[RMDB]
RNA sequence: GGGAACGACUCGAGUAGAGUCGAAAAGAGCGUCGAGAGACGAAGAGAAGUGCAUGGAUCCACAACGGAGAACGUAAUAAUGCACCCCUGUGGAUUAGUGUCCGGAACAACGGGCACAAGAGGCAGAGACCAUUACGUAGUUCGCUACGUAAUGGUCAAAAGAAACAACAACAACAAC
Reactivity to 2A3 in 0.01 (KOAc 150mM, MgCl2 10mM, bicine 150mM(pH8.5), 24C), signal-to-noise 3, nucleotides 027 to 126: g040a000g000c020g000u020c020g010a040g000a010g000a080c040g040a090a000g060a010g070a220a040g030u070g110c020a000u070g070g040a050u000c000c000a030c010a060a060c140g020g010a120g030a130a000c030g020u040a050a030u080a130a060u200g050c030a060c020c000c000c040u020g010u040g020g010a020u020u050a030g000u030g000u030c010c000g060g030a050a160c170a100a030c050g000g010g000c020a000c000a010a030g080a010g040g060c010a000g050a000
Reactivity to DMS in 0.01 (KOAc 150mM, MgCl2 10mM, bicine 150mM(pH8.5), 24C), signal-to-noise 4, nucleotides 027 to 126: g030a110g000c020g000u000c000g000a200g000a220g000a040c030g000a080a060g000a080g010a130a110g010u020g040c030a090u000g000g020a110u000c000c000a000c160a070a090c250g000g000a120g000a050a090c100g020u010a060a070u020a080a060u020g020c080a110c050c010c040c040u000g000u000g000g020a140u000u020a080g030u000g010u000c000c040g030g030a090a050c300a110a140c010g020g000g000c000a000c010a050a060g010a170g000g020c010a030g040a150
Description
Structure probing data (2A3 and DMS) for a 177-nucleotide construct. It was measured as part of the RMDB library OK1LIB. For DMS, 6,290 sequencing reads were counted. For DMS the reverse transcriptase was MarathonRT. Conditions: 150 mM KOAc, 10 mM MgCl2 and 150 mM bicine (pH 8.5), 24 C.